[RMDB]
RNA sequence: GGGAACGACUCGAGUAGAGUCGAAAAGAUAUGGAUUAGUUGCGCUAGCUACGGUCGGAAACGACCGAAUAGCUUGGACCGCAAUAAUCCUAAGUCAAACCAGUCAGAGCUUCGGCUCUGACUGGAACACUGAACACAACUUCGGUUGUGUUCAGUGAAAAGAAACAACAACAACAAC
Reactivity to 2A3 in 0.01 (KOAc 150mM, MgCl2 10mM, bicine 150mM(pH8.5), 24C), signal-to-noise 1, nucleotides 027 to 126: g040a010u070a070u110g030g020a020u000u080a060g300u070u020g000c030g010c130u120a030g020c000u010a030c010g030g000u010c020g010g030a160a060a110c030g000a010c000c000g020a040a040u040a020g010c000u030u150g160g010a090c020c060g000c000a010a020u020a010a010u000c000c010u030a140a010g030u030c030a030a080a150c000c000a000g000u020c000a000g000a030g000c010u190u300c300g110g000c000u060c000u000g000a000c010u000g000g020a020a000
Reactivity to DMS in 0.01 (KOAc 150mM, MgCl2 10mM, bicine 150mM(pH8.5), 24C), signal-to-noise 2, nucleotides 027 to 126: g030a030u010a300u000g000g000a000u000u000a030g030u000u000g010c010g030c020u000a020g000c000u020a080c040g020g020u000c000g040g000a130a120a130c000g030a000c010c000g000a040a090u000a010g010c000u000u020g020g000a090c300c000g030c010a010a090u000a030a000u000c000c000u010a030a130g010u000c020a140a160a230c000c000a000g000u010c010a000g000a000g000c010u000u010c270g020g000c020u000c000u000g010a010c000u010g010g010a050a090